Conditions: 150 mM KOAc, 10 mM MgCl2 and 150 mM bicine (pH 8.5), 24 C. The record gives the reactivity of an RNA of 207 nucleotides to 2A3. Reactivities are given for positions 27 through 156.
[RMDB]
RNA sequence: GGGAACGACUCGAGUAGAGUCGAAAACGUGCUGUGAUUGGCCGCAGCAGUGUUGACGGAUACGUGAGAAGAAAACGGCGUGGUAGCUCGGAGUGUGGAAUCGGGCGCGAACCUGAGUUCUGAGAAGUGUGGAAGCACGUCUGAGGCAGUUAAGCGCGUCUAAGUAACCCUUCGGGGUUACUUAGACAAAAGAAACAACAACAACAAC
Reactivity to 2A3 in 0.01 (KOAc 150mM, MgCl2 10mM, bicine 150mM(pH8.5), 24C), signal-to-noise 1, nucleotides 027 to 156: c060g020u020g010c000u030g040u110g040a170u120u140g030g000c050c000g000c000a020g070c020a020g050u000g010u150u140g100a080c060g020g090a020u090a070c030g030u020g040a050g030a180a000g000a000a110a000a000c080g020g000c000g080u040g040g040u070a040g000c070u030c080g090g000a060g000u020g000u060g050g030a090a080u100c070g030g020g000c020g000c040g030a050a030c000c000u070g060a070g060u130u080c000u030g060a000g070a150a020g040u080g010u090g090g020a040a030g100c010a000c020g040u020c050u040g020a010g040g000c000a000g000u050u080a110a030g000c010g000c000
The data come from the RNA Mapping Database (RMDB), library OK3TST.